Structure probing data (2A3 and DMS) for a 177-nucleotide construct. The DMS profile rests on 2,962 reads.
RNA sequence: GGGAACGACUCGAGUAGAGUCGAAAACAACCUGUUGAUGCAGGUAGUGUGUAUCAUGCGAAUCGUUCUGCGAUUCGUAACUGCAGGUUGCUCCGGUUGAUCGAUAGAUUGUAAGGUUUGUCGGUCGGAGAACUACAUACUUCGGUAUGUAGUUCUCAAAAGAAACAACAACAACAAC
Reactivity to 2A3 in 0.01 (KOAc 150mM, MgCl2 10mM, bicine 150mM(pH8.5), 24C), signal-to-noise 4, nucleotides 027 to 126: c000a000a010c000c000u000g000u030u040g010a010u020g000c010a010g170g070u180a150g130u110g010u000g000u110a010u010c010a010u030g010c010g020a010a000u000c000g020u120u150c140u300g000c000g000a000u010u000c000g000u000a010a020c030u090g000c000a010g010g000u010u010g000c010u000c010c000g120g050u160u230g010a010u010c010g000a000u000a020g020a010u000u070g090u220a160a170g070g010u000u020u010g020u010c010g000g030u010c000g000
Reactivity to DMS in 0.01 (KOAc 150mM, MgCl2 10mM, bicine 150mM(pH8.5), 24C), signal-to-noise 3, nucleotides 027 to 126: c020a020a000c000c000u010g010u000u000g000a040u000g010c000a020g000g020u020a040g020u010g020u000g010u000a020u010c030a220u020g010c000g010a010a010u000c010g030u000u030c300u030g020c020g020a010u000u010c010g010u000a020a150c300u000g000c010a010g000g000u000u000g000c060u000c020c010g000g020u000u020g000a010u000c010g000a010u000a000g000a020u000u000g010u010a160a110g010g010u000u000u000g020u000c010g000g000u000c010g000
As a SHAPE reagent, 2A3 marks flexible, mostly unpaired nucleotides at the ribose 2'-OH. The reactions ran in a buffer of 150 mM KOAc, 10 mM MgCl2 and 150 mM bicine (pH 8.5), at 24 C.